Source: RMDB library OK1LIB, as collected in RNAgym. The record gives the reactivity of an RNA of 177 nucleotides to 2A3 and DMS. The DMS profile rests on 2,000 reads. The RNA was probed in 150 mM KOAc, 10 mM MgCl2 and 150 mM bicine (pH 8.5) at 24 C.
RNA sequence: GGGAACGACUCGAGUAGAGUCGAAAAGAAAUCGGUCAGCAGACGAUCGUUCUGCAAAAGAAAACAUGAUGAGUAGUCAUGAUACUCGAAAGAAAGGGUACACUAACCGUGCCAGUUAGAAAAGAAAGGGUAAGUAAGACUUCGGUCUUACUUACCCAAAAGAAACAACAACAACAAC
Reactivity to 2A3 in 0.01 (KOAc 150mM, MgCl2 10mM, bicine 150mM(pH8.5), 24C), signal-to-noise 3, nucleotides 027 to 126: g010a000a110a120u070c020g050g000u060c100a010g040c000a000g030a000c050g030a050u210c070g070u160u030c000u020g000c010a000a000a050a100g180a000a100a010a080c050a020u050g020a000u060g020a030g180u300a010g060u090c000a000u000g040a080u020a060c050u060c030g110a110a140a000g210a070a240a030g080g000g000u090a020c000a020c030u180a170a040c040c010g000u010g010c050c000a020g010u050u120a030g120a130a110a030a000g190a010a130a070
Reactivity to DMS in 0.01 (KOAc 150mM, MgCl2 10mM, bicine 150mM(pH8.5), 24C), signal-to-noise 2, nucleotides 027 to 126: g040a050a120a060u000c090g010g000u040c090a020g020c000a030g030a010c010g010a180u140c070g000u020u000c000u000g000c070a040a040a200a080g000a100a000a120a140c070a000u000g020a000u020g010a070g000u050a090g000u010c010a110u000g020a180u000a050c000u000c000g000a030a020a080g030a130a090a110g000g000g000u000a090c020a090c090u000a030a050c130c040g000u010g000c110c050a200g030u000u000a050g000a150a060a010a070g040a130a100a110